This 177-nucleotide RNA was probed chemically with DMS and 2A3. For DMS the reverse transcriptase was MarathonRT. For 2A3 the reverse transcriptase was SuperScript II with manganese.

[RMDB]
RNA sequence: GGGAACGACUCGAGUAGAGUCGAAAAAAAACUACAUCAUAGGAGGUACAACAUGUACAAAAUUUUUAGUUUCGUUUCAUUAAUACUUAGUAUGCUAUGUUUUAUGGGCUUACAAGUUUUAAAUGUCACAGCGCUAUAUAUUCGUAUAUAGCGCUGUAAAAGAAACAACAACAACAAC
Reactivity to DMS in 0.01 (KOAc 150mM, MgCl2 10mM, bicine 150mM(pH8.5), 24C), signal-to-noise 2, nucleotides 027 to 126: a110a000a040a000c080u020a060c050a050u000c100a080u010a060g010g000a120g000g000u000a020c020a140a080c180a080u020g000u010a030c040a040a030a020a070u010u010u010u020u020a170g000u000u000u010c210g010u000u000u000c010a060u010u000a030a000u000a000c010u000u000a130g020u000a000u000g000c000u000a040u030g000u050u030u010u010a050u000g010g000g000c000u000u000a020c010a030a020g000u000u000u000u010a000a030a040u000g010u000c140
Reactivity to 2A3 in 0.01 (KOAc 150mM, MgCl2 10mM, bicine 150mM(pH8.5), 24C), signal-to-noise 2, nucleotides 027 to 126: a000a000a000a000c020u050a050c000a080u110c020a040u080a050g150g070a060g000g090u050a030c020a210a010c020a200u170g010u030a020c020a050a070a060a060u190u260u280u200u270a090g010u000u010u030c070g010u030u300u030c010a030u030u030a000a000u020a020c000u000u000a040g010u000a010u040g020c040u030a000u140g160u010u020u100u160a080u150g210g010g000c000u000u010a010c020a000a000g000u000u010u000u050a220a060a020u020g040u040c020